[RMDB]
RNA sequence: GGGAACGACUCGAGUAGAGUCGAAAACGCUGGGCGUGGAGAACGAGCUGACCAGGGAGCUGAAGCGCGCACGGCUUUGAUCUGGUCAACUCGACCACGCCUGUGCUGAAGCGCGCACGGCAACCGAAAGGUGCGGAGAGACCCAUUCGUGGGUCAAUAAGCUAUGCCAAUUCGUUGGCAUAGCUUAAAAAGAAACAACAACAACAAC
Reactivity to 2A3 in 0.01 (KOAc 150mM, MgCl2 10mM, bicine 150mM(pH8.5), 24C), signal-to-noise 2, nucleotides 027 to 156: c030g030c020u040g010g010g000c000g000u000g020g020a070g010a300a140c040g000a000g000c000u000g000a000c000c000a030g060g030g000a000g000c010u030g020a280a020g000c000g000c000g040c000a030c010g000g000c050u200u180u070g030a010u030c000u010g000g000u000c000a000a010c000u010c000g050a020c000c000a000c000g000c000c010u000g000u000g000c000u080g030a160a050g000c000g010c010g000c010a010c010g070g000c010a020a070c000c010g050a090a060a010g020g000u090g030c050g020g030a070g000a010g000a060c010c020c020a020u100u120c220g100u030g010g010g000u010c000a000a070
Reactivity to DMS in 0.01 (KOAc 150mM, MgCl2 10mM, bicine 150mM(pH8.5), 24C), signal-to-noise 1, nucleotides 027 to 156: c060g030c020u000g030g030g010c010g020u000g000g010a120g000a130a220c050g000a030g030c000u010g020a070c000c010a060g000g000g000a070g050c000u000g000a070a070g000c000g050c020g000c000a300c060g010g030c000u000u010u010g020a000u030c000u010g000g010u000c000a020a020c020u000c070g010a150c000c030a010c010g010c000c040u000g010u010g000c010u000g010a170a050g020c090g070c010g080c020a180c050g060g030c050a080a300c010c000g010a030a110a150g020g000u000g000c010g020g010a150g020a260g000a010c000c000c010a080u000u000c120g010u000g000g050g030u000c010a060a120

Structure probing data (2A3 and DMS) for a 207-nucleotide construct.
The RNA was probed in 150 mM KOAc, 10 mM MgCl2 and 150 mM bicine (pH 8.5) at 24 C.
The 2A3 profile rests on 1,932 reads.
As a SHAPE reagent, 2A3 marks flexible, mostly unpaired nucleotides at the ribose 2'-OH.
The DMS profile rests on 2,279 reads.